[RMDB]
RNA sequence: GGGAACGACUCGAGUAGAGUCGAAAAGGAGGAGCUUGGAUCGGGACAGUUUGGUGUUGUGCGGCGCGGCAAGUGGCGUGGGUCUAUCGACACAGCGGUCAAGAUGAUGAAGGAAGGAACCAUGUCCAUAACUAUGUCUGUUCGCAGACAUAGUUAUAAAAGAAACAACAACAACAAC
Reactivity to 2A3 in 0.01 (KOAc 150mM, MgCl2 10mM, bicine 150mM(pH8.5), 24C), signal-to-noise 3, nucleotides 027 to 126: g040g010a030g000g010a030g030c040u060u060g050g010a050u090c050g000g000g040a030c030a050g030u050u140u120g090g010u080g010u090u070g040u040g000c030g030g000c030g000c010g030g010c040a070a060g050u030g060g020c020g030u040g000g020g000u000c040u070a120u090c030g020a000c010a000c000a090g090c050g040g020u060c030a020a050g030a090u110g010a020u050g030a040a030g060g010a030a030g030g020a010a010c030c020a040u060g030u000c030c010
Reactivity to DMS in 0.01 (KOAc 150mM, MgCl2 10mM, bicine 150mM(pH8.5), 24C), signal-to-noise 8, nucleotides 027 to 126: g010g000a070g000g010a060g010c060u010u010g010g000a070u010c080g010g000g010a070c090a080g000u000u000u000g020g010u000g010u000u010g020u000g010c070g010g010c050g020c070g010g010c080a060a070g020u010g000g010c050g020u000g000g000g010u000c040u000a090u000c060g010a100c070a040c080a080g010c060g000g010u000c060a060a090g000a070u000g010a080u010g010a070a080g000g010a070a150g000g000a060a050c050c040a060u000g000u000c070c080
An RNA of 177 nucleotides, treated with 2A3 and DMS and read out base by base. 2A3 adducts were read by reverse transcription with SuperScript II with manganese. The RNA was probed in 150 mM KOAc, 10 mM MgCl2 and 150 mM bicine (pH 8.5) at 24 C. It was measured as part of the RMDB library OK2TRN. For DMS the reverse transcriptase was MarathonRT.